[RMDB]
RNA sequence: GGGAACGACUCGAGUAGAGUCGAAAAGAUCAGUGCAUGCGUAUGGGAGAUGCCUAUAUCAUCGUGUACUCGGUGACAGACAAGUCCAGCUUUGAGAAAGCUUCAGAGCUCCGAAUCCAGCUGCGCAGAUUUCACUGUACUUCGGUACAGUGAAAUCAAAAGAAACAACAACAACAAC
Reactivity to 2A3 in 0.01 (KOAc 150mM, MgCl2 10mM, bicine 150mM(pH8.5), 24C), signal-to-noise 6, nucleotides 027 to 126: g060a050u130c060a030g010u000g030c010a040u040g010c030g040u060a070u110g020g010g010a130g030a140u120g140c010c020u070a070u020a010u140c050a030u030c020g020u020g040u120a070c070u020c060g030g000u030g020a030c020a050g050a020c020a080a030g050u040c010c010a030g000c010u040u030u040g070a120g050a060a160a010g020c000u070u070c050a050g000a010g040c000u010c020c020g040a010a030u010c010c010a010g000c020u050g000c050g000c040a020
Reactivity to DMS in 0.01 (KOAc 150mM, MgCl2 10mM, bicine 150mM(pH8.5), 24C), signal-to-noise 3, nucleotides 027 to 126: g010a080u020c080a080g000u000g000c050a090u060g030c170g020u010a040u010g010g010g000a070g030a120u040g000c080c040u000a080u000a190u000c060a050u000c010g020u000g000u010a040c090u020c010g000g000u000g000a040c220a070g000a070c100a060a080g010u010c030c070a030g010c000u030u010u000g000a040g040a180a100a130g010c160u020u020c050a050g020a070g000c000u010c060c060g000a090a120u000c030c060a040g010c060u000g010c060g000c040a020